[RMDB]
RNA sequence: GGGAACGACUCGAGUAGAGUCGAAAAGAUAUGGAUCCGUUUCGAGAGGGCCUAAGGUGAGGGUGCUCGGAAACGAGCACCUACCCACCACCUUAGGCCUACCCACCUCGAUGCGGAUCCUAAGUCACGAUAUGGAUCUGUUCGCAGAUCCAUAUCGAAAAGAAACAACAACAACAAC
Reactivity to DMS in 0.01 (KOAc 150mM, MgCl2 10mM, bicine 150mM(pH8.5), 24C), signal-to-noise 2, nucleotides 027 to 126: g030a020u000a200u010g000g000a020u000c020c000g030u000u000u000c000g010a000g000a200g010g010g010c010c000u010a000a010g000g010u010g000a160g050g020g020u000g000c000u000c000g000g000a020a050a100c030g030a020g000c000a020c010c000u000a000c010c060c140a300c060c000a060c000c010u010u010a000g000g010c000c000u010a000c110c070c300a300c160c020u000c000g000a000u000g040c000g000g000a000u000c000c000u000a000a020g000u010c020a300

Structure probing data (DMS) for a 177-nucleotide construct.
The RNA was probed in 150 mM KOAc, 10 mM MgCl2 and 150 mM bicine (pH 8.5) at 24 C.